[RMDB]
RNA sequence: GGGAACGACUCGAGUAGAGUCGAAAAGCAUGUUUAUGUGAACCUAAGAAUGAAUCUCAGUGACUGUAGAUUAGAAGUACUGAUUAUAGCAUUGGCUGCUUGGUGUUCACUUUAUUUGCAUCUGUGAGUUUCCAACAAGCCCUAAGUUUACUGACAAAUUUUAAUGGCACUUCGGUGCCAUUAAAAUAAAAGAAACAACAACAACAAC
Reactivity to 2A3 in 0.01 (KOAc 150mM, MgCl2 10mM, bicine 150mM(pH8.5), 24C), signal-to-noise 1, nucleotides 027 to 156: g000c020a040u030g020u050u050u040a230u160g000u030g000a030a000c000c010u000a010a010g070a000a110u150g030a080a100u050c010u020c030a000g000u020g210a140c030u030g050u160a160g040a300u090u100a020g180a260a020g060u120a030c000u000g070a010u060u030a050u160a070g020c040a100u000u120g110g000c000u040g000c030u000u000g020g000u100g060u100u020c030a020c000u000u080u040a090u030u050u050g030c010a030u000c030u090g050u030g040a030g050u010u060u030c040c000a030a000c020a120a080g040c020c000c010u060a080a020g000u000u000u060a100c020u040g000a020c030a110a110
Reactivity to DMS in 0.01 (KOAc 150mM, MgCl2 10mM, bicine 150mM(pH8.5), 24C), signal-to-noise 1, nucleotides 027 to 156: g010c030a050u050g000u030u000u000a020u000g090u000g010a060a050c040c000u030a070a090g000a130a100u000g000a090a170u050c060u000c030a050g020u010g010a160c010u010g010u000a090g010a100u000u010a080g010a060a170g040u030a150c030u000g030a090u000u000a060u000a050g060c030a100u030u010g010g040c050u000g010c020u000u020g060g010u000g030u010u000c060a080c010u000u010u000a000u030u000u000g000c030a180u000c110u000g060u000g010a080g000u000u000u000c060c020a080a180c050a120a150g000c010c000c030u000a030a160g020u000u000u010a100c060u000g010a060c050a030a120